Chemical mapping of a 177-nucleotide RNA with 2A3 and DMS. 2A3 adducts were read by reverse transcription with SuperScript II with manganese.

[RMDB]
RNA sequence: GGGAACGACUCGAGUAGAGUCGAAAACGCCGCGAUCGGCCGCGCGGGCACGAAGGGCACGCUCGCGCGUUCGCUCGACGCGAUCGCCGCGCAGACAUCACCGCUGAUCGUCGCCGUACGCGUGCCGCGCGGUCAAUUGAUUCGUCAAUUGACCGCGAAAAGAAACAACAACAACAAC
Reactivity to 2A3 in 0.01 (KOAc 150mM, MgCl2 10mM, bicine 150mM(pH8.5), 24C), signal-to-noise 3, nucleotides 027 to 126: c050g050c020c030g050c060g090a140u080c030g010g030c030c010g010c000g010c010g000g050g020c030a000c030g010a020a060g050g000g010c030a000c060g000c010u010c000g000c000g000c010g000u010u010c010g050c030u060c150g210a110c160g000c020g000a030u030c010g060c120c030g020c010g030c020a010g060a120c010a100u090c020a030c120c150g050c120u060g030a060u020c040g010u010c090g030c020c020g050u150a040c030g000c010g030u110g000c000c000g020
Reactivity to DMS in 0.01 (KOAc 150mM, MgCl2 10mM, bicine 150mM(pH8.5), 24C), signal-to-noise 3, nucleotides 027 to 126: c130g010c090c080g010c080g020a050u010c050g010g000c020c020g020c000g030c040g000g000g010c020a040c030g000a100a100g000g000g000c020a090c140g010c030u000c030g000c110g020c010g000u000u000c030g020c010u010c190g020a150c170g000c000g010a040u000c000g020c070c060g030c090g020c120a140g010a050c090a050u020c100a100c170c110g000c100u000g000a130u010c060g000u000c120g040c020c000g020u000a140c110g000c020g000u010g020c000c020g030
Description: Reactivities are given for positions 27 through 126. For 2A3, 3,838 sequencing reads were counted. The RNA was probed in 150 mM KOAc, 10 mM MgCl2 and 150 mM bicine (pH 8.5) at 24 C.